[RMDB]
The record gives the reactivity of an RNA of 177 nucleotides to 2A3. 2A3 adducts were read by reverse transcription with SuperScript II with manganese. 2A3 is a SHAPE reagent: it acylates the 2'-hydroxyl of flexible nucleotides of all four kinds.
RNA sequence: GGGAACGACUCGAGUAGAGUCGAAAAGACGGUGCGCCGGCCGUUCCGCAGCCAUCAGACGGUCAAAGAUGUGCUGGAGGCGAUGGGCAUUCCGCAUACCGAGGUGGAUCUCAUCCUGGUGAACGGCCCCGAGAGAACUCUUCGGAGUUCUCUCGGGAAAAGAAACAACAACAACAAC
Reactivity to 2A3 in 0.01 (KOAc 150mM, MgCl2 10mM, bicine 150mM(pH8.5), 24C), signal-to-noise 2, nucleotides 027 to 126: g020a000c040g030g010u020g010c030g000c010c000g000g000c000c000g000u040u000c050c020g000c020a000g020c000c000a010u010c000a040g190a210c070g110g040u120c090a070a090a040g050a010u040g150u170g030c000u050g000g090a210g070g000c060g010a010u000g030g010g010c150a110u260u080c000c040g000c020a010u150a300c030c100g060a150g160g020u000g020g000a050u010c000u020c020a000u040c010c000u100g040g120u210g040a040a020c000g020g000c020